[RMDB]
RNA sequence: GGGAACGACUCGAGUAGAGUCGAAAACAUAUCGUUCGUUUCACUGGGCUACUACUACUCAACGCAUUUAUUGUGCGCGGUAGACCGGUGGGCGGCAUUCAACAUUAAGUCAGCUCGAAGUCAAACACAUCUGAGAGAAGUUCGCUUCUCUCAGAUGAAAAGAAACAACAACAACAAC
Reactivity to DMS in 0.01 (KOAc 150mM, MgCl2 10mM, bicine 150mM(pH8.5), 24C), signal-to-noise 2, nucleotides 027 to 126: c140a120u000a080u000c120g010u010u010c030g030u000u010u000c010a020c020u000g000g050g000c000u010a040c000u010a080c140u000a140c140u010c070a210a080c000g000c010a000u000u010u010a100u040u000g020u000g010c030g010c100g040g020u000a010g000a030c020c000g030g030u000g000g000g010c040g030g040c060a070u000u000c100a080a050c120a090u000u000a060a130g000u000c020a190g020c010u000c030g010a090a130g000u000c050a060a030a090c100a160
Reactivity to 2A3 in 0.01 (KOAc 150mM, MgCl2 10mM, bicine 150mM(pH8.5), 24C), signal-to-noise 3, nucleotides 027 to 126: c040a060u170a050u180c120g080u180u030c020g020u060u190u260c010a010c010u010g000g020g010c010u040a010c000u050a020c000u040a050c030u080c100a110a020c040g000c010a020u000u120u150a300u280u300g000u010g000c040g000c040g000g010u000a010g000a040c000c000g000g000u000g000g010g000c010g000g040c000a000u090u110c030a030a090c020a060u100u220a150a040g050u010c020a010g010c010u010c030g040a180a010g020u030c010a030a070a050c050a010
The record gives the reactivity of an RNA of 177 nucleotides to DMS and 2A3. DMS adducts were read by reverse transcription with MarathonRT. The reactions ran in a buffer of 150 mM KOAc, 10 mM MgCl2 and 150 mM bicine (pH 8.5), at 24 C. For 2A3, 2,801 sequencing reads were counted. For 2A3 the reverse transcriptase was SuperScript II with manganese.